[RMDB]
RNA sequence: GGGAACGACUCGAGUAGAGUCGAAAAGACGGCAAGAUGCCACGUGCUGGUCGCGCUUUGAUGGCCGACGCUGUUGGUAUGACGGCAGGUGCUAUUCUUGGAACGUCACCUACUUCAGCCUACGUUGAGUCUUCAUCAGGUAUGGCCGUUGGUGGUCUAGUACAAGGGAAUUCGUUCCCUUGUACUAAAAAGAAACAACAACAACAAC
Reactivity to DMS in 0.01 (KOAc 150mM, MgCl2 10mM, bicine 150mM(pH8.5), 24C), signal-to-noise 3, nucleotides 027 to 156: g000a090c010g000g050c030a050a100g010a120u000g020c100c040a060c040g010u000g030c020u010g030g010u000c040g050c040g000c080u010u000u060g020a090u020g020g000c030c010g030a060c170g010c010u010g010u000u010g000g020u000a080u000g010a080c090g020g020c020a030g000g020u000g010c020u010a080u000u000c030u010u000g030g020a040a080c030g020u000c020a070c020c000u000a060c060u000u010c050a060g000c000c010u000a050c040g030u010u000g030a140g010u000c090u000u010c060a130u000c040a060g010g010u000a060u010g020g000c000c020g020u000u000g000g000u000g030g000u000c050
Reactivity to 2A3 in 0.01 (KOAc 150mM, MgCl2 10mM, bicine 150mM(pH8.5), 24C), signal-to-noise 7, nucleotides 027 to 156: g040a020c050g000g140c050a020a030g050a120u080g040c040c010a020c040g100u090g020c030u140g100g050u050c040g000c000g040c090u200u110u190g130a150u170g040g000c030c030g030a050c070g020c120u090g030u180u080g040g030u170a250u200g040a010c030g020g020c030a010g010g090u030g020c060u080a110u180u090c050u030u080g080g040a120a030c040g030u050c040a020c010c010u070a080c020u060u080c030a000g010c000c010u030a040c030g100u050u040g030a030g090u050c040u080u050c060a100u020c020a020g040g000u080a070u140g050g000c020c030g040u020u050g030g030u060g000g040u040c040